This 207-nucleotide RNA was probed chemically with 2A3 and DMS. The 2A3 profile rests on 1,812 reads. High DMS reactivity at an A or C suggests that its Watson-Crick edge is free.

RNA sequence: GGGAACGACUCGAGUAGAGUCGAAAAGAAAGUUCAAGCAAGCUAGCCGGCAAAAAAGCAAACUUGACCGCCAAGGAUAAAAGAGAUCUUAUCCAAGGAUGCAAAAGAUAAUCUCACUUUUGACACCAAAACAGGGAGUAGUUCGCUACUCCCUGAAACUUUGUAUAGGCUUCGGCCUAUACAAAGUAAAAGAAACAACAACAACAAC
Reactivity to 2A3 in 0.01 (KOAc 150mM, MgCl2 10mM, bicine 150mM(pH8.5), 24C), signal-to-noise 3, nucleotides 027 to 156: g040a020a060a000g020u060u050c040a000a000g000c030a080a020g030c030u060a010g020c010c060g090g000c090a080a060a100a080a010a030g030c050a060a050a030c000u010u020g030a040c020c010g020c040c040a060a030g000g000a030u010a040a060a030a000g100a010g010a050u020c010u020u010a010u010c030c010a040a020g050g010a070u050g030c000a000a030a030a030g030a020u120a120a130u070c030u030c040a050c020u040u040u020u050g080a090c020a030c060c070a050a060a080a090c000a000g000g000g000a000g000u000a000g010u020u070c080g010c050u000a010c000u060c030c000c000u000g000a000a010
Reactivity to DMS in 0.01 (KOAc 150mM, MgCl2 10mM, bicine 150mM(pH8.5), 24C), signal-to-noise 2, nucleotides 027 to 156: g020a140a070a030g010u000u020c000a060a080g010c030a020a180g030c010u000a300g050c030c000g060g050c060a000a110a020a070a100a080g020c000a100a070a030c030u000u010g010a090c040c050g100c050c050a060a300g000g000a010u000a010a020a030a020g020a240g030a150u000c050u000u010a040u010c030c030a050a280g000g010a040u000g000c020a040a030a030a040g000a050u000a060a140u000c060u010c030a180c040u000u000u000u000g010a180c010a060c040c050a040a040a130a120c010a000g000g040g000a040g010u000a000g010u000u000c300g010c010u000a010c000u010c000c000c000u010g010a010a020